[RMDB]
RNA sequence: GGGAACGACUCGAGUAGAGUCGAAAAGAAAAUACAAGGCUGACAAAACCCUGUCCCAACCUCCACGUGGUGUCGGCUGGAUAAUGCUGCAUUAUGUUCCAUUUAUCAACUGGGAAGGGCAAAAAAAACAACAAUCAUUGUUCGCAAUGAUUGUUGUAAAAGAAACAACAACAACAAC
Reactivity to 2A3 in 0.01 (KOAc 150mM, MgCl2 10mM, bicine 150mM(pH8.5), 24C), signal-to-noise 2, nucleotides 027 to 126: g010a000a040a010a000u140a050c010a040a100g040g040c030u020g020a010c040a030a110a080a130c020c020c020u030g100u070c000c020c000a020a100c010c000u060c060c060a070c120g080u060g000g030u020g000u040c010g010g000c000u040g000g010a010u060a070a020u050g020c050u040g020c020a040u090u120a120u300g040u050u040c000c010a000u020u050u040a070u030c020a020a040c010u010g020g000g000a020a000g010g000g000c030a060a010a070a000a030a030a000
Reactivity to DMS in 0.01 (KOAc 150mM, MgCl2 10mM, bicine 150mM(pH8.5), 24C), signal-to-noise 3, nucleotides 027 to 126: g010a170a080a090a110u020a060c070a060a120g000g000c000u000g010a060c040a030a210a100a150c010c010c020u000g000u000c000c010c020a040a100c010c010u000c060c060a120c140g000u010g000g020u000g000u000c010g020g010c010u000g000g000a050u000a040a060u000g010c070u000g000c030a070u010u000a070u010g000u000u020c100c010a090u000u000u000a020u030c040a030a030c150u010g010g010g010a130a100g000g000g000c150a000a000a000a060a000a030a050